[RMDB]
RNA sequence: GGGAACGACUCGAGUAGAGUCGAAAAGAGGCGAAAUAAUUCCCAUCUCCUAUGUACGGCCGGAGAUGGGUAUGGCCGUACUAAUAAGCCUCAUAGUGACGAGAGUCACGAAUUCUGGAUAGCCUUUGGUAGUCGGCUAUCCUCUGACUACCGUAGAGAUAGUAUAAUUAUUCGUAAUUAUACUAUCAAAAGAAACAACAACAACAAC
Reactivity to DMS in 0.01 (KOAc 150mM, MgCl2 10mM, bicine 150mM(pH8.5), 24C), signal-to-noise 4, nucleotides 027 to 156: g010a040g020g020c020g020a110a090a130u010a090a160u000u000c010c020c010a150u010c020u010c030c010u000a110u010g010u000a020c020g020g010c020c070g000g000a140g020a090u010g000g030g010u000a010u000g020g020c000c020g000u000a090c030u000a090a130u000a100a240g010c000c010u010c010a160u020a180g010u000g000a020c010g020a300g000a300g010u010c000a020c010g000a070a070u000u010c040u000g010g010a240u000a100g000c020c020u000u000u010g020g030u000a040g040u000c070g000g000c080u000a090u010c070c050u000c010u010g000a050c020u000a010c010c000g020u010a120g010a280
Reactivity to 2A3 in 0.01 (KOAc 150mM, MgCl2 10mM, bicine 150mM(pH8.5), 24C), signal-to-noise 8, nucleotides 027 to 156: g010a000g000g010c030g080a050a080a090u170a040a090u110u040c000c000c000a020u040c050u040c010c020u110a070u150g020u010a010c010g020g000c030c010g040g030a100g020a080u150g050g000g030u050a030u060g010g000c000c000g000u000a000c000u010a020a110u060a050a010g000c000c000u000c000a030u110a030g030u030g000a000c010g010a010g010a010g130u000c010a000c010g010a040a060u200u080c060u090g020g030a040u030a050g020c010c000u080u080u130g080g010u070a040g040u040c020g000g000c020u030a070u040c010c010u000c010u020g000a010c010u020a030c020c010g050u070a040g010a000